[RMDB]
RNA sequence: GGGAACGACUCGAGUAGAGUCGAAAAGCUGUUCUACAUGCAUUAUCUUAAGUUCAACCUCACAACAACCAUAGAAGUAGGAAUUAACUAUUUUAUUGAUAACAAAGUGAAAUUUAGAGAUGUUAAGUCAAGCCUUCAAGAGAGAGACCUCAUGUCAGCAUGCCCCAUUAUUCGUAAUGGGGCAUGCAAAAGAAACAACAACAACAAC
Reactivity to 2A3 in 0.01 (KOAc 150mM, MgCl2 10mM, bicine 150mM(pH8.5), 24C), signal-to-noise 1, nucleotides 027 to 156: g040c010u060g100u060u000c060u120a040c000a060u190g010c030a210u000u040a150u280c000u010u070a010a010g010u100u090c060a080a080c060c000u070c060a010c010a170a110c010a020a020c090c000a000u030a130g150a030a000g090u100a030g000g040a010a070u070u000a130a080c000u000a090u000u000u000u100a100u030u100g040a000u030a190a090c030a080a140a000g000u000g000a000a150a090u150u280u070a090g000a000g000a030u030g030u090u180a130a000g000u030c030a000a000g000c000c000u000u190c130a190a000g030a000g060a000g000a000g000a040c000c000u130c000a000u060g110u180c010a000
Source: RMDB library OK3TST, as collected in RNAgym. Structure probing data (2A3) for a 207-nucleotide construct. The reactions ran in a buffer of 150 mM KOAc, 10 mM MgCl2 and 150 mM bicine (pH 8.5), at 24 C. 2A3 is a SHAPE reagent: it acylates the 2'-hydroxyl of flexible nucleotides of all four kinds.